[RMDB]
RNA sequence: GGGAACGACUCGAGUAGAGUCGAAAAGACAUGGGCGGCGACGGGAUCGAGCUUAACGUGGUCCAGCGCCACUACGACGACGGAUGCGUGAUCGAAAAUAUCUACCUGGAGAACAUCGACUCCACCGGACAGGCUCCGAUCAACCCGUCCAACUGGGAAGUCAGUUGAAAUUCGUUUCAACUGACUUAAAAGAAACAACAACAACAAC
Reactivity to 2A3 in 0.01 (KOAc 150mM, MgCl2 10mM, bicine 150mM(pH8.5), 24C), signal-to-noise 6, nucleotides 027 to 156: g090a020c050a120u100g000g010g020c020g010g000c110g040a120c110g100g100g020a010u000c000g000a010g000c010u090u070a070a020c080g010u020g040g000u060c070c090a100g010c080g010c090c010a010c010u040a020c070g190a020c040g010a000c000g030g030a120u040g040c090g110u030g050a200u010c020g020a030a040a030a060u150a070u010c030u070a190c060c100u130g040g010a030g000a050a030c030a060u030c010g010a010c020u000c000c010a010c000c000g020g020a030c010a050g020g020c010u070c090c080g000a000u000c010a010a070c010c000c000g000u000c000c000a020a040c030u060g030g010g100
Reactivity to DMS in 0.01 (KOAc 150mM, MgCl2 10mM, bicine 150mM(pH8.5), 24C), signal-to-noise 3, nucleotides 027 to 156: g010a080c070a090u010g000g010g040c050g000g000c050g000a190c080g020g000g010a170u000c010g010a070g060c020u000u000a090a120c080g050u010g020g010u000c010c090a150g020c020g000c000c010a080c060u010a160c080g000a150c060g010a060c040g030g000a030u000g020c030g040u010g020a080u000c010g010a080a060a080a100u010a070u000c030u000a130c100c050u010g010g010a300g000a070a150c120a120u000c020g020a120c000u000c000c000a030c020c010g000g010a090c030a120g010g030c030u000c020c040g020a090u000c010a080a080c060c000c000g010u000c000c000a020a070c050u000g000g000g000